This 177-nucleotide RNA was probed chemically with 2A3. Values cover nucleotides 27 to 126.
[RMDB]
RNA sequence: GGGAACGACUCGAGUAGAGUCGAAAACACGUGAACAUCGCUCUGCUAAGUCCCGUCGUUCUUCCAGUCAGAGCGAGAUUGUAAGCAACCUUAUGCGCAAUGAAGACAUAGAGGGACUUCUCAAUGACCGAUUACGUCCGUUCGCGGACGUAAUCGGAAAAGAAACAACAACAACAAC
Reactivity to 2A3 in 0.01 (KOAc 150mM, MgCl2 10mM, bicine 150mM(pH8.5), 24C), signal-to-noise 1, nucleotides 027 to 126: c130a030c110g080u140g090a100a030c050a160u000c000g000c000u000c010u010g000c080u030a060a000g040u050c040c020c000g010u030c030g050u090u020c000u050u000c050c000a030g100u150c000a000g040a000g040c050g010a000g010a020u060u060g010u100a030a080g060c010a000a100c050c060u130u150a030u120g120c140g000c010a030a110u150g070a070a090g070a040c020a100u070a050g090a070g040g000g030a050c000u100u020c060u030c010a080a260u190g040a080